[RMDB]
RNA sequence: GGGAACGACUCGAGUAGAGUCGAAAAAAGGAUGUCUCAAGUUUGUUUGAAUUUGGACGAAUCUAUAUAUUAAAUAGUGUCUAGAUACAUCCAAGUUUAGACAAAUUUGAUACAUCCUUUUCGGGACGACAAUACUUGAGUUCGCUCAAGUAUUGUCAAAAGAAACAACAACAACAAC
Reactivity to DMS in 0.01 (KOAc 150mM, MgCl2 10mM, bicine 150mM(pH8.5), 24C), signal-to-noise 1, nucleotides 027 to 126: a000a000g000g000a000u000g010u000c040u000c000a020a030g020u000u000u000g020u000u000u010g000a000a010u000u010u000g000g000a030c020g010a130a000u000c000u010a010u000a040u000a040u010u010a160a130a210u020a120g010u000g000u000c040u000a010g000a020u000a060c050a060u000c010c000a000a000g030u000u000u000a010g020a000c010a000a000a000u000u020u000g000a020u000a010c000a000u000c000c000u010u000u000u000c030g000g010g020a150c210
Reactivity to 2A3 in 0.01 (KOAc 150mM, MgCl2 10mM, bicine 150mM(pH8.5), 24C), signal-to-noise 1, nucleotides 027 to 126: a000a000g000g000a000u010g000u000c010u010c000a000a000g000u000u000u000g000u000u000u000g000a000a000u000u000u010g010g000a010c010g010a040a020u000c000u000a000u010a010u000a030u100u200a220a250a300u280a150g030u020g010u000c010u010a000g010a010u010a040c000a010u000c000c000a000a000g000u000u000u010a000g000a000c010a000a010a000u010u000u000g000a000u000a010c000a000u000c000c010u000u000u000u000c020g000g050g050a050c080
An RNA of 177 nucleotides, treated with DMS and 2A3 and read out base by base. The RNA was probed in 150 mM KOAc, 10 mM MgCl2 and 150 mM bicine (pH 8.5) at 24 C. 2A3 adducts were read by reverse transcription with SuperScript II with manganese. The data come from the RNA Mapping Database (RMDB), library RFMREP. The DMS profile rests on 1,423 reads.